[RMDB]
RNA sequence: GGGAACGACUCGAGUAGAGUCGAAAAGCUACAGCUCUUGACAACACCUCUGUCCGUGACGAUGAGUUAUCCAUCCCGCCGGGAACGGGAAGCGUAGCCUGUUUCUACUCUGCUCUUAUCUGGUUCCGAGUAUUAAAAAGUUCGCUUUUUAAUACUCAAAAGAAACAACAACAACAAC
Reactivity to DMS in 0.01 (KOAc 150mM, MgCl2 10mM, bicine 150mM(pH8.5), 24C), signal-to-noise 6, nucleotides 027 to 126: g000c020u000a030c020a150g020c010u000c090u010u010g010a080c090a060a070c090a120c100c060u000c060u010g020u000c010c150g010u010g010a060c110g000a050u000g000a130g010u000u000a070u010c050c090a110u000c010c030c020g010c040c050g000g000g010a100a140c030g010g000g000a100a030g020c040g000u000a020g010c060c100u010g010u000u000u000c000u000a040c010u000c010u000g000c000u000c000u010u010a060u010c030u010g020g010u000u000c010c010
Reactivity to 2A3 in 0.01 (KOAc 150mM, MgCl2 10mM, bicine 150mM(pH8.5), 24C), signal-to-noise 9, nucleotides 027 to 126: g020c010u020a010c030a060g010c010u030c030u110u160g060a040c030a100a020c020a140c040c030u080c080u130g060u020c030c040g100u090g060a050c040g030a060u080g010a010g090u140u130a080u120c030c000a030u020c010c010c010g020c040c050g060g010g010a060a050c010g020g010g010a030a010g020c010g010u000a000g010c000c030u180g180u030u020u000c000u000a000c000u000c000u000g010c010u000c000u050u040a100u040c060u100g120g000u000u000c000c000
Chemical mapping of a 177-nucleotide RNA with DMS and 2A3. For 2A3 the reverse transcriptase was SuperScript II with manganese. Conditions: 150 mM KOAc, 10 mM MgCl2 and 150 mM bicine (pH 8.5), 24 C. For DMS the reverse transcriptase was MarathonRT. For DMS, 7,074 sequencing reads were counted. The data come from the RNA Mapping Database (RMDB), library RFMREP. For 2A3, 23,175 sequencing reads were counted. Values cover nucleotides 27 to 126.